Conditions: 150 mM KOAc, 10 mM MgCl2 and 150 mM bicine (pH 8.5), 24 C. The record gives the reactivity of an RNA of 207 nucleotides to DMS and 2A3. 2A3 adducts were read by reverse transcription with SuperScript II with manganese. For DMS, 5,518 sequencing reads were counted. The 2A3 profile rests on 2,216 reads.
RNA sequence: GGGAACGACUCGAGUAGAGUCGAAAAACAUUUAUGAAAUAUGAUCUGAAUGGCAGUGAGAGCAUUUGCUUCGCAGGUGAUGAUAUGUGUGCCUCAAAAAAACUGCGUUUGCAUGACGAGCAUAAAAGUUUCCUGGACAGGUUGAGACUGAAGGCUACGAUUAAGUACUGUUCGCAGUACUUAAUCGAAAAGAAACAACAACAACAAC
Reactivity to DMS in 0.01 (KOAc 150mM, MgCl2 10mM, bicine 150mM(pH8.5), 24C), signal-to-noise 2, nucleotides 027 to 156: a060c060a080u000u000u010a080u010g010a130a060a140u000a110u010g010a130u010c070u000g000a070a080u000g010g030c040a070g020u010g010a070g030a120g020c030a140u010u000u000g010c020u000u000c050g000c020a100g010g010u010g010a110u000g010a140u000a060u000g030u010g050u010g030c080c050u000c010a000a000a070a090a070a030a100c030u000g000c010g010u010u000u000g040c040a050u010g010a110c030g010a080g000c020a070u000a040a050a070a090g030u000u000u000c020c020u010g030g000a050c040a040g030g010u010u010g000a060g000a110c070u010g020a080a080g000g010c030u000a140
Reactivity to 2A3 in 0.01 (KOAc 150mM, MgCl2 10mM, bicine 150mM(pH8.5), 24C), signal-to-noise 4, nucleotides 027 to 156: a000c050a040u200u200u130a230u180g040a060a090a020u230a080u120g040a080u010c040u070g050a090a030u070g050g010c040a020g030u020g090a060g010a020g030c010a040u070u100u140g010c020u030u020c020g000c040a020g000g040u030g030a070u020g030a020u040a060u220g080u010g040u050g080c010c030u000c000a060a050a030a010a000a020a050c020u020g000c010g030u060u100u090g010c020a010u040g030a040c040g020a020g070c020a020u070a110a110a000a000g000u000u030u050c000c020u020g020g020a020c020a060g010g090u050u060g030a030g000a040c030u050g020a040a010g010g000c010u030a020